[RMDB]
RNA sequence: GGGAACGACUCGAGUAGAGUCGAAAAGUGGCGAAUUCGUUCGCCACAAAAAUCCUAAGUCAGUUUCCCUUGGAUUUAAUGCUGGAGUCGGAAACGACGAUGAAAGCAUUUGUCAGGGAGGGCUGAUAUGGAAAAAAGGGCUGUUUCGACAGCCCAAGGAUUUCAUCUGUUUCGACAGAUGAAAUCCAAAAGAAACAACAACAACAAC
Reactivity to 2A3 in 0.01 (KOAc 150mM, MgCl2 10mM, bicine 150mM(pH8.5), 24C), signal-to-noise 1, nucleotides 027 to 156: g000u000g000g000c010g000a000a010u050u050c200g060u040u010c010g000c000c000a000c000a000a000a010a000a000u010c020c000u040a120a000g010u000c000a030g000u010u080u170c070c010c010u040u100g070g010a080u300u110u250a030a000u010g000c000u000g000g030a020g020u000c010g040g100a090a110a110c150g170a060c020g010a060u070g010a010a020a010g000c000a010u020u000u000g010u000c010a020g000g020g000a110g000g050g030c000u000g010a010u010a060u060g010g020a040a090a090a100a040a090g040g000g000c020u020g010u060u120u150c110g070a020c000a000g020c000c010c000a000a040

Source: RMDB library RNAMAK, as collected in RNAgym. Chemical mapping of a 207-nucleotide RNA with 2A3. The RNA was probed in 150 mM KOAc, 10 mM MgCl2 and 150 mM bicine (pH 8.5) at 24 C. Values are in units of 0.01, from 0 to 300, in steps of 10.